[RMDB]
RNA sequence: GGGAACGACUCGAGUAGAGUCGAAAAUCUACAUAGUUCGCUAUGUAGAAAAACGCGCACGCGCGCGCACGCGCUCACUCUGGCACACGCACGCGCACGCAAAAACGUUGCGGUUCGCCGCAACGAACUAUGUUGCUUCGUUCGCGAAGCAACAUAGAAAAGAAACAACAACAACAAC
Reactivity to DMS in 0.01 (KOAc 150mM, MgCl2 10mM, bicine 150mM(pH8.5), 24C), signal-to-noise 2, nucleotides 027 to 126: u000c000u010a020c000a020u000a000g010u000u020c230g010c020u000a000u000g000u010a010g000a010a050a040a090a090c090g000c050g040c070a070c140g010c020g020c020g020c030g040c060a070c070g060c100g000c000u020c120a100c190u020c150u000g010g020c010a040c030a170c030g020c020a050c000g010c030g000c010a080c030g000c040a060a040a090a120a100c010g000u010u000g030c000g000g000u000u000c140g020c000c010g000c030a020a010c000g000a050a130
Reactivity to 2A3 in 0.01 (KOAc 150mM, MgCl2 10mM, bicine 150mM(pH8.5), 24C), signal-to-noise 2, nucleotides 027 to 126: u000c000u000a000c000a000u010a000g020u020u040c170g020c100u000a000u010g000u000a010g040a010a020a010a000a000c060g030c000g000c000a030c130g040c010g000c000g000c010g000c000a020c070g040c030g000c010u050c060a160c070u280c160u140g050g000c010a010c000a000c120g000c010a010c020g000c000g010c000a000c020g000c030a040a000a000a030a070c000g010u010u000g010c010g000g030u020u060c290g060c060c010g000c000a000a000c000g000a010a000
Chemical mapping of a 177-nucleotide RNA with DMS and 2A3.
For DMS, 1,212 sequencing reads were counted.